Chemical mapping of a 177-nucleotide RNA with DMS and 2A3. The RNA was probed in 150 mM KOAc, 10 mM MgCl2 and 150 mM bicine (pH 8.5) at 24 C.

[RMDB]
RNA sequence: GGGAACGACUCGAGUAGAGUCGAAAACAGAAAAGAAUUGUAAACCACUUACAAUACUAUUCGAUGCGAGGCUUAGUGGUCAUAUUGAUCAAUUCUGCAAUGCAGAUAAUGCUGUCUUGUACAGCGAAAUGAAAUAGGUUUUCGAACCUAUUUCAUUAAAAGAAACAACAACAACAAC
Reactivity to DMS in 0.01 (KOAc 150mM, MgCl2 10mM, bicine 150mM(pH8.5), 24C), signal-to-noise 9, nucleotides 027 to 126: c080a170g000a040a030a120a050g010a120a010u000u000g000u000a010a050a170c190c200a090c190u000u000a010c010a020a020u000a080c020u000a100u000u000c030g010a110u010g010c050g020a070g010g000c060u000u000a040g020u000g010g000u000c030a090u010a100u010u000g010a040u000c040a040a090u010u000c020u000g010c010a080a070u000g010c030a040g010a060u010a050a080u010g010c000u000g000u000c030u000u010g030u010a020c000a000g010c000g000a040
Reactivity to 2A3 in 0.01 (KOAc 150mM, MgCl2 10mM, bicine 150mM(pH8.5), 24C), signal-to-noise 9, nucleotides 027 to 126: c030a010g090a020a070a010a010g040a030a020u020u010g010u020a030a040a100c070c030a050c090u020u020a010c010a020a040u020a060c010u070a070u050u090c040g060a040u080g040c040g050a030g100g000c050u070u080a020g020u050g030g000u010c010a040u160a120u240u190g030a040u050c030a040a110u100u010c000u000g000c030a070a150u190g000c000a000g030a090u070a090a050u220g000c010u000g020u010c040u110u220g040u090a010c010a000g000c010g020a020
2A3 adducts were read by reverse transcription with SuperScript II with manganese.
DMS adducts were read by reverse transcription with MarathonRT.